[RMDB]
RNA sequence: GGGAACGACUCGAGUAGAGUCGAAAAAAUUACAUUCAUUAUGUAUUGGGUGAUUGAAAAGUUACCACAGGGAUAACUGGCUUGUAGCAGGCAAGCGAUCAUAGCGACUCUGCUUUUUGAUUCUUCGAUGUCGUCUCUUCUGAUCAUCGUAGUGUAUAUUCAUACUUAACUUCGGUUAAGUAUGAAUAAAAGAAACAACAACAACAAC
Reactivity to DMS in 0.01 (KOAc 150mM, MgCl2 10mM, bicine 150mM(pH8.5), 24C), signal-to-noise 3, nucleotides 027 to 156: a040a050u000u000a060c020a020u000u000c110a140u010u000a070u000g010u000a060u010u010g010g040g040u000g000a070u000u000g000a100a070a070a100g010u000u010a030c020c030a100c110a110g020g000g010a060u010a070a030c020u010g030g000c010u000u000g020u000a170g040c140a110g000g020c020a020a050g000c010g000a060u000c030a100u000a100g010c020g030a170c020u000c010u000g050c030u000u010u000u010u000g000a090u000u000c030u000u000c010g000a050u010g030u000c020g000u000c020u000c050u000u000c070u020g010a120u000c080a050u010c060g020u000a110g000u000g000u000a130u000
Reactivity to 2A3 in 0.01 (KOAc 150mM, MgCl2 10mM, bicine 150mM(pH8.5), 24C), signal-to-noise 4, nucleotides 027 to 156: a020a000u170u060a020c000a000u000u140c020a030u080u300a050u100g020u030a050u040u090g070g010g010u040g000a030u040u050g040a090a010a100a050g010u020u020a010c020c030a050c110a100g060g080g040a070u040a120a040c030u040g060g020c010u000u030g020u040a070g040c070a020g160g000c000a010a010g000c030g040a010u080c010a050u070a070g080c020g010a010c010u010c010u010g000c000u060u020u030u070u080g070a070u080u010c030u030u050c030g030a050u160g020u010c020g030u020c020u000c000u210u040c050u060g100a100u090c050a030u070c130g110u100a090g040u050g030u110a040u020